[RMDB]
RNA sequence: GGGAACGACUCGAGUAGAGUCGAAAAGAUCGUCUAGCAUGCGUCUCCAUGAGUAGCGUACCGCGAUCAGCUGAUCUGAGAGUCGGUACCAUGUCAUGAGAUGACAUGGUACGUCCAUGCUCAUGCAACACGCGAUCACUUUCGAGUGAUCGCGUGUAAAAGAAACAACAACAACAAC
Reactivity to 2A3 in 0.01 (KOAc 150mM, MgCl2 10mM, bicine 150mM(pH8.5), 24C), signal-to-noise 3, nucleotides 027 to 126: g030a050u120c000g060u060c130u140a020g140c020a040u090g000c010g020u020c000u000c080c020a090u140g020a000g090u130a010g010c060g010u020a050c040c100g020c030g000a040u000c000a020g050c030u120g050a130u080c010u010g090a060g020a010g290u150c060g030g010u000a000c010c000a010u030g010u010c010a050u100g240a040g040a300u050g010a030c000a000u010g040g010u040a020c050g060u020c030c000a040u040g000c010u040c040a020u180g010c060a090
Reactivity to DMS in 0.01 (KOAc 150mM, MgCl2 10mM, bicine 150mM(pH8.5), 24C), signal-to-noise 2, nucleotides 027 to 126: g030a000u000c060g020u000c100u000a090g000c060a110u000g010c110g020u000c000u000c080c070a050u000g010a020g020u010a090g010c080g020u010a030c060c100g010c060g000a070u000c000a110g000c240u020g000a110u010c010u000g000a100g020a220g030u020c030g000g010u000a000c000c000a020u000g010u010c010a020u000g010a150g020a300u000g000a030c000a010u000g000g000u000a020c020g000u000c040c030a090u000g010c040u000c010a120u010g000c130a050